[RMDB]
RNA sequence: GGGAACGACUCGAGUAGAGUCGAAAAGAUCUACUACCUGAGGAGUGUAAGGGGAGGGUGACAGCUGGUGAUUUUGAGCGUUUACACAUUGCUUGUCAUGGGGUGCAGAUUCCUGAUUUAGAAACUCGUCUUCCAAAAGAUUCGUCUUUUGGAAGACAAAAGAAACAACAACAACAAC
Reactivity to 2A3 in 0.01 (KOAc 150mM, MgCl2 10mM, bicine 150mM(pH8.5), 24C), signal-to-noise 3, nucleotides 027 to 126: g000a020u030c010u070a040c010u070a090c050c050u100g040a080g040g040a110g030u120g060u200a050a070g030g010g000g000a140g010g010g010u020g020a010c020a010g000c010u050g010g040u020g030a120u020u020u050u090g050a040g040c060g020u000u030u040a020c050a000c010a040u070u100g010c030u100u180g000u000c020a030u050g010g000g010g030u060g010c020a020g010a060u070u040c020c010u040g050a120u100u100u080a090g060a120a050a000c040u040c080
Reactivity to DMS in 0.01 (KOAc 150mM, MgCl2 10mM, bicine 150mM(pH8.5), 24C), signal-to-noise 3, nucleotides 027 to 126: g010a110u010c060u010a110c080u010a100c070c030u010g000a120g000g000a120g020u010g010u010a050a120g000g010g010g020a160g000g000g000u010g010a020c050a030g030c050u000g010g000u010g000a260u000u000u000u000g010a060g000c300g010u010u010u010a080c040a060c050a130u010u010g010c020u010u010g040u000c030a060u010g000g010g010g010u000g010c080a070g000a090u000u000c040c020u010g020a110u010u010u000a100g000a070a030a090c150u000c140
About this RNA
The data come from the RNA Mapping Database (RMDB), library OK2TST. An RNA of 177 nucleotides, treated with 2A3 and DMS and read out base by base. Reactivities are given for positions 27 through 126. Conditions: 150 mM KOAc, 10 mM MgCl2 and 150 mM bicine (pH 8.5), 24 C.